[RMDB]
The record gives the reactivity of an RNA of 177 nucleotides to DMS and 2A3. It was measured as part of the RMDB library OK1LIB. High 2A3 reactivity points to a flexible backbone, as in loops and unpaired stretches. Reactivities are given for positions 27 through 126. For 2A3, 27,482 sequencing reads were counted.
RNA sequence: GGGAACGACUCGAGUAGAGUCGAAAAGCUGGCCAACCGGUUCGCAGAGCUGAGCGGAGGCAGUGAAAACGUCACCGCCGUCGUGGUCGGCAGGCGUGAACAGGCACAGAUGACGUACCUGAUACGUCAUAUUAGUCGAGUUCGCUCGACUAAUAUGAAAAGAAACAACAACAACAAC
Reactivity to DMS in 0.01 (KOAc 150mM, MgCl2 10mM, bicine 150mM(pH8.5), 24C), signal-to-noise 9, nucleotides 027 to 126: g010c020u000g000g000c000c020a120a120c090c050g010g010u000u000c020g010c040a110g000a300g000c010u000g010a070g000c010g000g000a080g000g020c010a040g010u010g000a050a090a140a140c300g010u010c000a030c010c030g010c000c010g010u010c030g020u000g000g010u000c000g000g010c010a040g020g000c110g010u000g000a040a040c030a070g000g010c050a100c050a050g010a080u010g010a030c030g010u000a030c030c110u020g000a150u010a010c020g000u000
Reactivity to 2A3 in 0.01 (KOAc 150mM, MgCl2 10mM, bicine 150mM(pH8.5), 24C), signal-to-noise 9, nucleotides 027 to 126: g020c010u030g030g020c010c010a080a100c090c050g100g020u040u030c030g000c060a060g010a030g140c030u050g010a010g020c010g010g010a030g020g000c020a010g010u010g060a070a100a040a080c090g120u030c010a010c020c020g010c010c010g080u090c020g020u060g060g110u030c000g010g010c020a030g050g100c020g020u030g010a030a020c020a040g030g000c040a020c020a250g070a060u110g040a050c050g020u030a050c000c030u050g020a110u050a140c030g010u000